[RMDB]
RNA sequence: GGGAACGACUCGAGUAGAGUCGAAAACAUCACACUGUAAGCCAGCCCCAGGCCACAGGGUCUCAGCCAUGUUUCUCAUGUCUAGGGUGAGCCCGGAGAGCCAGGACCAAAAGGAGGAAUCGGGAACCGGGGCCCUCGUGGGGAGACGGUAAGGUCACUAGUUAAAUAUAUUCGUAUAUUUAACUAGAAAAGAAACAACAACAACAAC
Reactivity to DMS in 0.01 (KOAc 150mM, MgCl2 10mM, bicine 150mM(pH8.5), 24C), signal-to-noise 2, nucleotides 027 to 156: c070a090u000c040a150c040a110c040u000g020u000a010a170g010c020c040a100g040c050c000c010c020a150g010g000c040c030a120c030a030g020g040g010u000c090u010c030a100g000c040c050a160u000g030u000u000u000c050u000c010a060u000g020u000c060u010a130g040g020g040u000g010a140g010c010c000c030g000g020a080g020a240g020c030c020a070g000g010a260c050c040a050a080a100a150g010g020a110g010g000a140a130u000c070g030g000g000a150a200c040c000g010g050g040g020c030c000c010u010c060g010u010g010g120g000g010a080g030a070c020g000g020u020a070a100g030g020u000c050a230
Reactivity to 2A3 in 0.01 (KOAc 150mM, MgCl2 10mM, bicine 150mM(pH8.5), 24C), signal-to-noise 2, nucleotides 027 to 156: c050a070u160c020a020c020a020c060u030g040u090a140a010g000c000c000a010g030c000c010c000c010a040g020g010c000c030a050c020a020g050g020g030u050c060u030c050a040g010c020c020a080u130g050u010u090u000c060u010c030a050u100g080u060c060u130a070g010g020g020u070g120a070g050c000c030c000g000g040a050g010a010g070c020c030a040g020g000a040c030c040a060a150a120a060g190g060a090g020g000a040a030u080c030g010g020g000a020a070c030c030g020g000g060g030c000c000c000u020c000g020u030g020g000g010g010a050g010a010c020g030g040u080a070a040g040g000u070c070a000
Structure probing data (DMS and 2A3) for a 207-nucleotide construct. The RNA was probed in 150 mM KOAc, 10 mM MgCl2 and 150 mM bicine (pH 8.5) at 24 C. DMS adducts were read by reverse transcription with MarathonRT. Source: RMDB library OK3TST, as collected in RNAgym.